[RMDB]
RNA sequence: GGGAACGACUCGAGUAGAGUCGAAAAUCCUAAGUCCUCCUUGGAUUUAGCUUCUGGAGGCAUGGCGAACGCUCAUCGGAAACGAUGAGCGACCAUGCCGUUGAAAGAAGCUUGUCAGGAGGAUAUGGAAAAAACACAGUGAUUCGUCACUGUGUAAGUUAAAAUUAGGCUUCGGCCUAAUUUUAACAAAAGAAACAACAACAACAAC
Reactivity to 2A3 in 0.01 (KOAc 150mM, MgCl2 10mM, bicine 150mM(pH8.5), 24C), signal-to-noise 1, nucleotides 027 to 156: u030c020c000u050a150a050g040u000c000c000u010c020c000u040u110g190g000a040u300u220u170a000g000c000u000u000c000u000g040g030a030g010g000c000a000u010g020g010c100g110a130a020c020g050c000u020c000a010u000c020g000g050a090a050a060c000g000a000u000g000a010g000c000g000a060c020c000a000u000g000c000c000g040u080u010g000a000a000a000g000a000a000g000c000u000u000g010u000c000a000g000g020a000g010g000a010u000a010u010g000g000a020a030a000a020a010a070c010a000c010a020g020u000g010a020u050u240c230g050u040c130a000c000u010g000u010g000u030a010a020
Reactivity to DMS in 0.01 (KOAc 150mM, MgCl2 10mM, bicine 150mM(pH8.5), 24C), signal-to-noise 1, nucleotides 027 to 156: u000c000c000u000a090a250g000u000c000c010u010c010c050u000u000g030g000a020u000u000u010a020g010c000u000u000c010u000g040g000a190g000g020c000a000u000g000g020c040g020a070a240c090g000c000u010c000a020u010c000g030g030a190a140a250c030g040a040u000g030a000g050c000g000a000c000c000a000u000g000c000c000g040u010u000g000a230a200a020g000a000a030g000c010u000u000g020u000c010a050g000g010a000g000g030a010u000a010u000g000g020a000a050a150a120a270a100c000a000c020a000g000u000g000a050u000u030c300g040u010c000a000c000u010g000u000g000u000a010a160
The record gives the reactivity of an RNA of 207 nucleotides to 2A3 and DMS.
Reactivities are given for positions 27 through 156.
The 2A3 profile rests on 2,415 reads.
2A3 adducts were read by reverse transcription with SuperScript II with manganese.